An RNA of 177 nucleotides, treated with 2A3 and DMS and read out base by base. The 2A3 profile rests on 874 reads. The reactions ran in a buffer of 150 mM KOAc, 10 mM MgCl2 and 150 mM bicine (pH 8.5), at 24 C. Source: RMDB libraries RFM100 and RFMREP, as collected in RNAgym.
RNA sequence: GGGAACGACUCGAGUAGAGUCGAAAAGUUUUUUAGAACCUACUGCUGCAGUUAAAACGACCGUAUCACCGUAACGAAUUAAUGCUGCCCCACUUGCUUGUUUUGCUAAUUGACCUACUUCAACAGACAAGUGUUUUCCUUUCGAGGAAAACACUUGAAAAGAAACAACAACAACAAC
Reactivity to 2A3 in 0.01 (KOAc 150mM, MgCl2 10mM, bicine 150mM(pH8.5), 24C), signal-to-noise 2, nucleotides 027 to 126: g020u000u000u000u030u070u090a090g070a030a110c000c000u070a020c020u090g020c010u030g010c030a020g010u090u120a090a030a000a000c120g060a060c020c040g010u050a050u080c000a010c050c010g080u090a070a060c090g010a020a040u070u040a030a040u150g000c000u000g020c000c000c030c000a000c030u000u070g000c000u000u030g050u040u170u050u100g000c010u010a030a100u060u020g010a030c020c020u040a030c020u090u060c050a110a140c000a010g190a090
Reactivity to DMS in 0.01 (KOAc 150mM, MgCl2 10mM, bicine 150mM(pH8.5), 24C), signal-to-noise 2, nucleotides 027 to 126: g010u010u000u020u040u020u030a150g000a180a120c040c000u000a090c030u000g000c060u020g000c070a040g060u010u020a080a040a090a110c090g010a090c040c010g010u010a100u000c060a070c030c020g000u030a070a060c030g000a050a070u040u020a080a070u000g000c070u000g030c000c010c040c060a010c050u000u000g000c050u000u010g000u000u000u010u030g010c060u000a060a140u000u000g030a090c030c030u010a110c070u000u010c040a020a110c240a080g020a150